[RMDB]
RNA sequence: GGGAACGACUCGAGUAGAGUCGAAAAGAUUGAGGUUGCGACUUUUUCGUUUUUGCUUUUGCAUGGAUAAUUCAUCCAUGCACAUCUCACUUUAUUGGACCUUCAAGAUUGGUUUCCCAUGUAAUUUCGCUCCUAGAUUGUUCGCAAUCUAGGAGCGAAAAGAAACAACAACAACAAC
Reactivity to 2A3 in 0.01 (KOAc 150mM, MgCl2 10mM, bicine 150mM(pH8.5), 24C), signal-to-noise 3, nucleotides 027 to 126: g080a010u140u100g010a010g010g040u070u130g080c000g020a100c060u240u140u040u060u090c070g100u040u060u050u190u060g040c060u060u090u080u120g000c010a000u010g000g000a000u060a150a120u290u090c160a000u020c000c000a000u000g000c010a000c000a020u000c000u000c000a080c060u080u120u040a160u090u090g070g000a020c010c000u000u040c060a030a080g020a150u020u010g120g090u070u010u030c010c000c000a030u140g050u090a100a140u020u000u000